[RMDB]
RNA sequence: GGGAACGACUCGAGUAGAGUCGAAAAUCAGGUCACUUCGGUGACCUGAAAACAAGGAACCAAAAGGAAAACCUAACCUAGGAAUAUGGAAACCAAAAUAAAAAACCAUAGCCUUCGGGCUAUGGAAGAUCUAGAUUAUCUUCGGAUAAUCUAGAUCAAAAGAAACAACAACAACAAC
Reactivity to 2A3 in 0.01 (KOAc 150mM, MgCl2 10mM, bicine 150mM(pH8.5), 24C), signal-to-noise 3, nucleotides 027 to 126: u020c000a000g000g010u000c010a020c030u030u100c220g120g000u000g000a000c000c000u010g000a010a000a000a010c030a030a060g100g020a050a070c030c020a020a110a000a090g080g010a090a140a030a040c020c010u030a040a080c010c030u060a050g090g120a090a060u110a060u210g020g050a060a030a050c020c030a030a070a130a020u210a080a150a020a030a000a000c000c000a000u000a000g030c000c010u030u090c300g130g010g000c000u000a000u010g000g000a000a020
Reactivity to DMS in 0.01 (KOAc 150mM, MgCl2 10mM, bicine 150mM(pH8.5), 24C), signal-to-noise 2, nucleotides 027 to 126: u010c000a030g010g000u000c010a010c000u010u010c190g010g030u010g010a000c000c000u020g010a020a000a050a140c170a070a140g010g010a170a150c020c040a060a040a080a120g010g000a080a070a080a080c010c020u000a050a090c010c020u000a050g010g010a040a070u010a070u020g010g000a120a090a160c080c060a060a040a070a090u040a010a030a060a090a120a070c000c000a020u000a010g020c000c000u000u000c230g020g020g000c000u000a010u000g000g000a010a020